[RMDB]
RNA sequence: GGGAACGACUCGAGUAGAGUCGAAAAUAAGUUACAAUGGACCGGUUACACUAUAUCUGUCUCGUUACGACACUGAACUAAAUAAAGAUGUACUUUGUGUACAUACUGGUUUUAUGUCAGAAGGACACACCACCGAUAUAUUCGUAUAUCGGUGGUGAAAAGAAACAACAACAACAAC
Reactivity to DMS in 0.01 (KOAc 150mM, MgCl2 10mM, bicine 150mM(pH8.5), 24C), signal-to-noise 4, nucleotides 027 to 126: u000a080a120g010u010u000a070c120a060a100u010g010g000a060c030c050g010g020u010u000a060c180a120c140u010a030u000a070u000c060u000g030u000c000u000c100g010u010u010a060c050g000a300c190a050c010u000g010a020a030c020u000a020a030a040u000a220a090a020g000a040u000g010u000a010c010u010u020u010g020u000g000u000a000c000a000u000a080c020u000g010g000u010u000u000u000a020u000g000u000c000a020g010a160a060g010g010a140c120a080
Reactivity to 2A3 in 0.01 (KOAc 150mM, MgCl2 10mM, bicine 150mM(pH8.5), 24C), signal-to-noise 5, nucleotides 027 to 126: u070a010a010g080u070u130a070c090a090a080u120g020g020a020c030c010g000g000u040u070a060c120a020c100u060a040u030a030u220c030u020g040u020c030u020c120g110u090u110a030c020g000a000c010a010c010u040g080a120a000c010u010a020a010a050u040a030a060a000g010a000u010g000u020a010c020u110u260u300g200u130g030u050a010c010a010u100a300c000u010g030g020u010u000u020u020a020u060g000u000c010a030g080a190a030g300g010a000c040a000
Conditions: 150 mM KOAc, 10 mM MgCl2 and 150 mM bicine (pH 8.5), 24 C. An RNA of 177 nucleotides, treated with DMS and 2A3 and read out base by base. It was measured as part of the RMDB library OK2TST. For 2A3 the reverse transcriptase was SuperScript II with manganese.